[RMDB]
RNA sequence: GGGAACGACUCGAGUAGAGUCGAAAAGAUAUGGAUGUCGACGAUCUUCGAGGAUCACAGCUCGGAAACGAGCUGUGGGAGAAGCAGAGUCGAGCAUCCUAAGUCAAAAGUCUAGUUCGCUAGACAACAGUAAACUUGUCUUCGGACAAGUUUACUGAAAAGAAACAACAACAACAAC
Reactivity to 2A3 in 0.01 (KOAc 150mM, MgCl2 10mM, bicine 150mM(pH8.5), 24C), signal-to-noise 2, nucleotides 027 to 126: g020a020u070a020u230g030g000a000u010g010u040c010g020a010c020g060a100u000c040u030u040c030g200a300g030g010a000u000c000a000c000a020g010c000u000c020g020g050a110a080a080c010g000a030g000c030u000g000u000g020g020g000a020g010a010a020g000c260a040g030a030g040u020c010g020a010g020c000a010u010c010c000u000a100a040g060u030c030a120a060a060a100g000u010c000u010a010g040u080u120c300g040c140u020a010g010a000c010a020a010
Reactivity to DMS in 0.01 (KOAc 150mM, MgCl2 10mM, bicine 150mM(pH8.5), 24C), signal-to-noise 3, nucleotides 027 to 126: g000a060u000a300u010g000g010a020u000g010u000c000g000a060c020g010a230u000c000u010u010c010g000a100g000g000a090u000c010a020c000a000g010c000u010c000g000g000a070a110a260c000g010a010g020c000u000g020u000g000g000g000a050g010a020a040g000c170a050g000a300g000u000c000g010a100g020c010a010u010c000c000u000a000a080g020u000c110a070a090a080a140g010u000c000u000a020g000u010u020c300g040c010u000a040g000a040c000a120a190